[RMDB]
The record gives the reactivity of an RNA of 177 nucleotides to DMS.
RNA sequence: GGGAACGACUCGAGUAGAGUCGAAAAGAUAUGGAGUAGCUGGAGCUCCCUGGCACAUCGGAAACGAUGUGGCCCUGGAGCGUUGAAAGCUACUCCUAAGUCAAAUCCGGAUCUUCGGAUCCGGAAAGUUGACUCAUACCUUCGGGUAUGAGUCAACAAAAGAAACAACAACAACAAC
Reactivity to DMS in 0.01 (KOAc 150mM, MgCl2 10mM, bicine 150mM(pH8.5), 24C), signal-to-noise 1, nucleotides 027 to 126: g000a050u000a300u010g010g000a010g000u010a010g030c000u010g010g000a050g000c000u000c000c000c010u000g000g000c000a000c000a000u000c010g020g030a170a100a280c010g010a010u000g000u000g010g030c010c000c030u010g010g010a010g000c000g010u000u000g020a110a130a010g010c000u000a000c010u020c000c010u000a000a020g000u000c050a140a150a090u000c000c000g000g000a000u000c000u010u000c190g030g000a000u010c000c000g020g000a000a000a000

About this RNA:
The data come from the RNA Mapping Database (RMDB), library TTRDEL.